Source information: Chemical mapping of a 177-nucleotide RNA with DMS and 2A3. High 2A3 reactivity points to a flexible backbone, as in loops and unpaired stretches. The DMS profile rests on 14,232 reads. Source: RMDB library OK1LIB, as collected in RNAgym. The 2A3 profile rests on 11,444 reads.
RNA sequence: GGGAACGACUCGAGUAGAGUCGAAAAGAAAAAGAGGCAGAGCCUUUGCUCUCAUACACCCCAUUGUAUUGGGUGGAUUGCUCUGUUAUAGACUGUGGGCAGGUUACUUAGGAUGUCCUCAGAGAAAGCUACCUAUAAUCUUCGGAUUAUAGGUAGCAAAAGAAACAACAACAACAAC
Reactivity to DMS in 0.01 (KOAc 150mM, MgCl2 10mM, bicine 150mM(pH8.5), 24C), signal-to-noise 5, nucleotides 027 to 126: g000a050a070a080a080a080g020a110g030g010c010a020g000a030g020c010c080u020u000u010g010c050u000c010u000c050a050u010a070c030a010c140c060c050c120a140u050u020g010u010a060u030u010g000g000g010u000g000g000a100u000u000g000c010u000c000u000g000u000u010a110u030a110g010a090c020u000g000u010g000g010g000c010a010g000g020u030u030a080c150u020u040a090g010g010a120u000g000u000c000c000u000c010a020g010a120g000a070a060a160
Reactivity to 2A3 in 0.01 (KOAc 150mM, MgCl2 10mM, bicine 150mM(pH8.5), 24C), signal-to-noise 8, nucleotides 027 to 126: g100a010a110a000a000a000g170a070g040g020c010a010g000a010g020c000c020u020u070u090g080c010u000c010u010c020a010u050a020c000a030c010c080c020c030a060u090u140g080u120a080u070u160g010g020g010u030g000g070a060u040u070g000c000u000c000u000g010u040u020a060u060a060g140a040c010u010g000u040g020g000g010c010a020g050g080u200u090a110c080u120u170a100g100g130a090u010g000u020c020c000u020c020a020g030a010g060a080a070a010